An RNA of 177 nucleotides, treated with 2A3 and DMS and read out base by base. The RNA was probed in 150 mM KOAc, 10 mM MgCl2 and 150 mM bicine (pH 8.5) at 24 C. In probing experiments dimethyl sulfate is read out at A N1 and C N3, which are open when not base-paired. For 2A3, 2,674 sequencing reads were counted. Reactivities are given for positions 27 through 126. The data come from the RNA Mapping Database (RMDB), library OK1LIB.
[RMDB]
RNA sequence: GGGAACGACUCGAGUAGAGUCGAAAAGGGAGCGGAAGUGUGGAUACGCGAGGGGACCCGGUCACGAAUAAGCCGAAUAACACACGAAAGGCGAAUAUAUAUAGAAGUGACGAAUAUAUAUGAAGAAGGGUAAUCUUAAGUUCGCUUAAGAUUACCCAAAAGAAACAACAACAACAAC
Reactivity to 2A3 in 0.01 (KOAc 150mM, MgCl2 10mM, bicine 150mM(pH8.5), 24C), signal-to-noise 3, nucleotides 027 to 126: g040g000g030a050g010c070g060g060a020a080g050u080g050u040g050g020a020u060a100c060g010c040g050a060g030g030g000g000a020c000c000c000g020g020u030c020a010c120g010a060a090u090a080a030g030c010c000g020a040a060u180a170a110c110a010c000a010c130g110a080a040a000g080g000c010g010a020a000u100a020u020a020u010a000u010a080g150a270a010g050u030g040a000c010g010a000a000u030a000u000a000u000a030u100g110a050a060g070a100a090
Reactivity to DMS in 0.01 (KOAc 150mM, MgCl2 10mM, bicine 150mM(pH8.5), 24C), signal-to-noise 4, nucleotides 027 to 126: g000g010g010a150g020c040g000g000a060a040g010u040g010u000g010g010a120u020a090c090g020c090g000a120g000g000g000g000a090c060c020c020g000g010u000c000a000c020g040a160a070u040a080a210g000c000c010g010a070a090u040a100a090c080a070c170a080c140g010a070a100a090g010g000c010g000a130a060u010a080u000a060u010a110u010a090g000a100a130g010u000g000a030c040g010a080a030u040a020u020a040u020a040u010g020a120a080g000a140a170